[RMDB]
Structure probing data (2A3 and DMS) for a 177-nucleotide construct. It was measured as part of the RMDB library OK1LIB. The DMS profile rests on 5,224 reads. For 2A3 the reverse transcriptase was SuperScript II with manganese.
RNA sequence: GGGAACGACUCGAGUAGAGUCGAAAAUGGUAUUAAGGAAUCAUACAGAGCGUCCCGAAGGCGUUGAGGCGGGAACAUCGAGAGUAAUUGGCACAGAUUAUGACAAUAUUGUUCGAAAUGUGAAACAUCUUAUGCUUGCUUUCGAGCAAGCAUAAGAAAAAGAAACAACAACAACAAC
Reactivity to 2A3 in 0.01 (KOAc 150mM, MgCl2 10mM, bicine 150mM(pH8.5), 24C), signal-to-noise 3, nucleotides 027 to 126: u100g040g050u180a130u130u090a100a060g130g030a050a040u060c040a020u070a230c080a040g030a040g030c060g000u020c000c000c000g060a030a020g090g030c060g000u080u110g100a010g000g070c040g030g030g040a050a020c070a060u110c050g020a010g000a000g060u040a130a140u020u130g070g000c090a000c050a060g080a080u130u160a040u250g040a000c000a040a110u020a110u240u000g060u150u050c040g000a000a020a110u050g000u040g020a000a120a000c080a020
Reactivity to DMS in 0.01 (KOAc 150mM, MgCl2 10mM, bicine 150mM(pH8.5), 24C), signal-to-noise 4, nucleotides 027 to 126: u010g010g030u000a070u030u020a120a120g010g010a030a030u000c050a040u020a080c060a100g020a080g030c090g000u000c030c020c020g000a100a080g000g000c040g000u000u010g020a080g000g020c040g000g010g010a110a050c080a100u020c110g000a100g000a100g010u000a040a080u000u010g000g000c020a010c060a060g000a140u050u010a080u000g000a020c110a040a060u010a060u010u000g000u010u000c060g000a060a060a060u010g020u010g000a100a080a120c290a050